[RMDB]
RNA sequence: GGGAACGACUCGAGUAGAGUCGAAAAUGCUACGAUCCUGAGCACCUCGUGCACAGAGCUCCAGACCAGGUUGCAGGACCCUCAGUACGGCACACCCACUGAGGAGUGCUGCAACUACGCUCGCUCCGCUGAACUAUUCUUUCGAGAAUAGUUCAGCAAAAGAAACAACAACAACAAC
Reactivity to 2A3 in 0.01 (KOAc 150mM, MgCl2 10mM, bicine 150mM(pH8.5), 24C), signal-to-noise 4, nucleotides 027 to 126: u090g000c010u040a020c040g040a040u040c000c020u040g010a010g020c000a030c000c040u050c040g020u050g010c020a040c030a080g100a040g070c030u040c040c010a040g030a100c040c030a060g010g000u010u000g000c000a010g020g080a000c000c000c000u000c000a020g010u090a100c090g040g000c100a040c010a080c100c020c010a010c000u010g000a010g000g040a100g010u020g070c000u000g000c000a000a000c000u010a000c010g000c010u020c030g020c030u090c060c070
Reactivity to DMS in 0.01 (KOAc 150mM, MgCl2 10mM, bicine 150mM(pH8.5), 24C), signal-to-noise 4, nucleotides 027 to 126: u010g010c040u010a040c080g000a070u010c020c020u000g000a080g000c050a130c120c070u000c090g030u000g010c040a070c090a110g000a120g000c060u000c040c030a100g000a130c120c100a110g010g000u010u010g000c000a010g000g000a020c000c000c010u010c020a010g000u000a130c220g010g000c140a090c250a100c100c020c020a050c030u010g010a040g000g000a070g020u000g000c000u000g000c010a010a000c000u000a030c180g020c070u000c040g000c060u010c080c170

Conditions: 150 mM KOAc, 10 mM MgCl2 and 150 mM bicine (pH 8.5), 24 C. This 177-nucleotide RNA was probed chemically with 2A3 and DMS. It was measured as part of the RMDB library OK2TST. Reactivities are given for positions 27 through 126. For 2A3 the reverse transcriptase was SuperScript II with manganese. For DMS the reverse transcriptase was MarathonRT. For 2A3, 9,007 sequencing reads were counted.